[RMDB]
RNA sequence: GGGAACGACUCGAGUAGAGUCGAAAAGAUAUGGAUCCUUGCUUUUGACGCUCUAUGGUCGGAAACGACCAAAUGAGCGAUAAGUUGGGAUCCUAAGUCAAAACGAGGACACUUCGGUGUCCUCGAACAUAUAGCAGUUGUUCGCAACUGCUAUAUGAAAAGAAACAACAACAACAAC
Reactivity to 2A3 in 0.01 (KOAc 150mM, MgCl2 10mM, bicine 150mM(pH8.5), 24C), signal-to-noise 8, nucleotides 027 to 126: g010a010u020a020u070g000g000a000u010c000c010u010u030g020c030u150u160u200u300g300a260c160g000c010u000c000u010a050u040g000g000u000c000g010g010a020a020a020c010g000a010c010c000a050a090a000u060g000a000g000c000g000a010u010a010a000g000u010u020g000g000g000a010u000c000c000u010a010a000g010u000c020a000a000a090a180c030g000a000g000g000a000c010a000c030u090u160c300g120g000u000g000u010c000c000u000c000g000a000a000
Reactivity to DMS in 0.01 (KOAc 150mM, MgCl2 10mM, bicine 150mM(pH8.5), 24C), signal-to-noise 8, nucleotides 027 to 126: g010a040u010a200u010g010g000a000u000c010c000u000u000g000c000u000u000u010u010g010a200c080g020c000u000c000u000a300u010g010g010u000c000g010g000a040a040a110c000g010a010c000c000a000a160a050u010g010a000g010c010g020a030u000a010a010g010u000u000g010g010g010a010u000c000c000u000a000a040g010u000c020a090a060a070a200c030g000a020g000g010a010c000a000c000u000u010c170g030g010u000g000u000c000c000u000c000g000a010a070
Chemical mapping of a 177-nucleotide RNA with 2A3 and DMS. The RNA was probed in 150 mM KOAc, 10 mM MgCl2 and 150 mM bicine (pH 8.5) at 24 C. 2A3 adducts were read by reverse transcription with SuperScript II with manganese. DMS adducts were read by reverse transcription with MarathonRT.